Description
The record gives the reactivity of an RNA of 207 nucleotides to 2A3 and DMS. For 2A3 the reverse transcriptase was SuperScript II with manganese. The DMS profile rests on 1,731 reads.
RNA sequence: GGGAACGACUCGAGUAGAGUCGAAAAUUUUAUGGCUGCAUAGUACUCCAUUGUAUAUAUGCACCAUAUUUUCUUUAUCCAAUCAUCUGUUGAUGGACAUUUAGGUUGCUUCCAAAUAUUGACGAGUGUGAUCAGUGCUGCAACAAACAUGGAAAUACUUUUACCUAUGCUUCGGCAUAGGUAAAAGAAAAGAAACAACAACAACAAC
Reactivity to 2A3 in 0.01 (KOAc 150mM, MgCl2 10mM, bicine 150mM(pH8.5), 24C), signal-to-noise 3, nucleotides 027 to 156: u130u060u010u000a010u000g050g000c070u010g000c000a000u000a010g010u000a010c000u040c260c050a240u300u140g000u000a000u010a010u000a000u010g000c010a000c010c010a000u010a010u000u040u000u010c010u030u130u090a080u020c010c030a110a100u060c020a050u020c080u150g080u100u110g060a090u020g030g020a020c020a060u060u040u080a050g020g020u030u030g010c040u090u020c030c010a090a110a160u180a100u050u100g030a010c060g010a050g080u130g020u080g100a100u050c040a010g050u030g080c030u040g000c010a010a000c000a010a090a050c040a030u100g050g110a040a040a090u230a110
Reactivity to DMS in 0.01 (KOAc 150mM, MgCl2 10mM, bicine 150mM(pH8.5), 24C), signal-to-noise 1, nucleotides 027 to 156: u000u000u000u000a030u020g010g000c130u010g090c010a030u000a070g000u000a000c000u000c060c300a170u010u030g020u010a030u000a120u000a020u000g010c010a060c000c010a000u000a020u000u010u000u000c030u000u000u010a070u010c010c020a150a180u000c040a040u000c110u010g060u000u010g040a140u000g000g010a010c030a050u000u000u000a090g040g060u010u010g000c010u030u010c030c030a070a040a150u000a070u010u000g030a190c080g020a090g030u010g020u000g010a080u000c050a140g050u010g000c030u000g040c060a110a070c090a090a050a070c090a060u000g000g000a050a090a140u000a190